[RMDB]
Record summary
Conditions: 150 mM KOAc, 10 mM MgCl2 and 150 mM bicine (pH 8.5), 24 C. Structure probing data (2A3) for a 207-nucleotide construct. 2A3 adducts were read by reverse transcription with SuperScript II with manganese.
RNA sequence: GGGAACGACUCGAGUAGAGUCGAAAACUUUCUUUUCUUAGUCUCCUCCUCCUCCUUGAUGUAUACUAAGAAUAUUCCAACUUUAUCUUCCUCAACAGGAGUCAGCUGUAUGACGUAUGUCAUCUUGCCUUCUUUAUCAGUGCGUAUGUCUGUGGUCCACACUCCUGGUUUUCGAACCAGGAGUGUGAAAAGAAACAACAACAACAAC
Reactivity to 2A3 in 0.01 (KOAc 150mM, MgCl2 10mM, bicine 150mM(pH8.5), 24C), signal-to-noise 1, nucleotides 027 to 156: c070u060u300u100c040u090u070u100u160c000u180u080a180g080u070c100u040c070c000u050c040c020u080c010c000u000c000c000u000u070g000a050u000g030u140a180u000a260c070u010a160a140g040a180a000u100a110u090u120c100c100a070a040c000u150u060u000a100u040c110u170u060c000c000u120c100a080a040c040a040g090g070a000g080u120c040a030g040c030u070g100u080a010u040g030a040c000g180u200a260u290g030u000c000a050u080c140u040u040g070c000c000u090u070c000u050u250u050a150u070c040a010g000u070g000c070g050u060a000u080g050u180c180u100g010u040g000g290u030c000